[RMDB]
RNA sequence: GGGAACGACUCGAGUAGAGUCGAAAACACCGCCUGCGCGGGCCAGAUGAUGCCGGUACGCUUACCCGGUGGCGAUCUUCGGUCGAUGGAGUGCGCGCCAGCGACUCCGGAGAGCGACCCGGGAAUCGGCCCGAUAAGGGUUCGCCCUUAUCGGGCCAAAAGAAACAACAACAACAAC
Reactivity to 2A3 in 0.01 (KOAc 150mM, MgCl2 10mM, bicine 150mM(pH8.5), 24C), signal-to-noise 1, nucleotides 027 to 126: c030a030c000c010g030c020c010u090g000c140g030c000g050g100g000c000c040a060g010a060u070g010a020u130g010c000c030g040g010u060a020c060g030c040u030u160a170c000c000c000g000g020u060g020g000c000g000a030u040c000u010u000c040g060g000u040c000g010a010u020g040g000a040g070u150g070c090g020c080g050c050c000a030g000c000g040a010c040u080c220c000g000g000a000g000a000g000c000g030a070c000c000c000g000g020g000a040a040u090c090